[RMDB]
This 207-nucleotide RNA was probed chemically with DMS and 2A3. For 2A3, 3,802 sequencing reads were counted. For 2A3 the reverse transcriptase was SuperScript II with manganese. The reactions ran in a buffer of 150 mM KOAc, 10 mM MgCl2 and 150 mM bicine (pH 8.5), at 24 C. It was measured as part of the RMDB library M2RFPK.
RNA sequence: GGGAACGACUCGAGUAGAGUCGAAAAACUGACGGUACGCCGUCAGAACGGUAGAAAAGAUGGUUUGAAAACCACGCCCUCUACCAAUAUAGUAAAUAAAUAGGCGGAGCGGUCAUACGUGACCGCAAAAACAUAUUCAGCUUCGGCUGAAUAUGAACAACAGUGAAAAGUUCGCUUUUCACUGUUGAAAAGAAACAACAACAACAAC
Reactivity to DMS in 0.01 (KOAc 150mM, MgCl2 10mM, bicine 150mM(pH8.5), 24C), signal-to-noise 2, nucleotides 027 to 156: a120c010u000g000a040c010g010g040u000a100c220g020c060c010g050u010c000a040g010a050a060c070g040g010u000a010g060a020a020a020a020g000a230u000g000g000u000u000u020g000a150a140a110a060c000c010a010c000g020c010c010c010u000c010u000a020c010c000a090a170u000a130u000a200g020u000a070a050a150u000a070a080a130u000a090g020g000c030g010g020a180g010c010g010g050u000c000a070u000a090c190g030u000g000a140c000c010g030c020a000a000a020a040a050c000a010u000a010u000u000c000a010g020c000u000u010c300g070g040c000u020g010a020a000u000a000u000g010a020a150
Reactivity to 2A3 in 0.01 (KOAc 150mM, MgCl2 10mM, bicine 150mM(pH8.5), 24C), signal-to-noise 5, nucleotides 027 to 156: a000c000u000g000a010c000g000g000u050a020c240g040c060c000g000u000c000a000g000a060a010c050g000g000u000a000g020a010a020a010a010g070a230u030g020g040u040u080u210g170a180a180a000a000c000c000a000c000g000c000c000c000u010c000u000a000c000c000a020a000u180a020u060a040g110u080a020a040a130u090a080a120a050u080a040g020g040c040g020g020a030g020c000g000g020u000c010a020u020a110c220g060u040g000a010c000c020g000c000a000a000a000a000a010c000a000u000a000u000u000c000a000g000c010u030u090c110g040g000c000u000g000a000a000u000a000u000g000a010a010